Conditions: 150 mM KOAc, 10 mM MgCl2 and 150 mM bicine (pH 8.5), 24 C. The record gives the reactivity of an RNA of 207 nucleotides to 2A3.
RNA sequence: GGGAACGACUCGAGUAGAGUCGAAAAACUCCUUUGCGCUUUUUUUUCGGAUUAGGCGUGGAGGCGAAAGUCACCCUCCUCGCAUCGCAAGUUCGUGCUUGCGACUUACACGUAGGGCGAGGGGUGGAAAACAGUAUGGGAUUCGUCCCAUACUGAAGUCCCUCUAGUGAUUCGUCACUAGAGGGACAAAAGAAACAACAACAACAAC
Reactivity to 2A3 in 0.01 (KOAc 150mM, MgCl2 10mM, bicine 150mM(pH8.5), 24C), signal-to-noise 2, nucleotides 027 to 156: a000c000u000c030c020u020u010u020g070c040g000c000u040u030u060u000u000u000u160u050c150g180g020a040u130u050a060g040g000c000g020u020g010g020a000g010g010c070g080a160a010a010g090u050c030a050c010c000c000u060c000c000u000c020g000c020a010u000c000g000c010a040a000g030u060u220c160g240u300g120c000u050u000g000c000g010a000c020u050u140a010c070a070c110g220u130a070g000g120g000c000g020a000g000g020g010g000u110g000g010a070a030a000a020c000a000g000u000a000u000g020g010g010a000u020u100c150g020u050c000c010c000a000u000a000c000u000g000a000a000
The 2A3 profile rests on 704 reads. 2A3 is a SHAPE reagent: it acylates the 2'-hydroxyl of flexible nucleotides of all four kinds.